[RMDB]
RNA sequence: GGGAACGACUCGAGUAGAGUCGAAAAGAUUUUCACCAAUCCGAUUCACUCUGUAAUAAAGAAUAAACAACAUACAGCCAUUGACACACCCAAAUUUAGGCACGUCAAAUCGGCUAUACAUUGAUAAGAUUUUGUUAUGAUUCGUCAUAACAAAAUCAAAAGAAACAACAACAACAAC
Reactivity to DMS in 0.01 (KOAc 150mM, MgCl2 10mM, bicine 150mM(pH8.5), 24C), signal-to-noise 7, nucleotides 027 to 126: g000a080u010u010u030u010c080a070c120c040a100a060u000c040c040g010a130u010u000c030a060c040u000c050u010g010u030a080a100u040a110a080a080g000a090a070u040a070a100a110c060a030a070c110a120u010a050c130a050g020c010c010a070u000u000g010a010c010a110c230a160c200c000c060a050a050a130u050u000u010a070g000g020c130a140c200g000u000c010a010a020a050u010c150g010g000c010u000a050u020a040c120a120u000u010g000a070u010a060a100
Reactivity to 2A3 in 0.01 (KOAc 150mM, MgCl2 10mM, bicine 150mM(pH8.5), 24C), signal-to-noise 9, nucleotides 027 to 126: g040a020u030u030u040u100c060a080c050c020a020a050u040c030c020g040a020u040u040c010a020c040u050c030u060g070u100a030a090u090a130a230a030g130a050a080u210a150a130a060c070a030a020c010a050u180a030c050a020g000c000c000a020u020u030g010a000c010a000c000a020c030c010c030a060a100a080u180u220u160a070g020g000c040a010c070g020u010c000a000a020a150u130c050g000g000c000u010a010u020a010c040a040u020u150g040a020u070a140a120
The data come from the RNA Mapping Database (RMDB), libraries RFM100 and RFMREP. An RNA of 177 nucleotides, treated with DMS and 2A3 and read out base by base. The reactions ran in a buffer of 150 mM KOAc, 10 mM MgCl2 and 150 mM bicine (pH 8.5), at 24 C.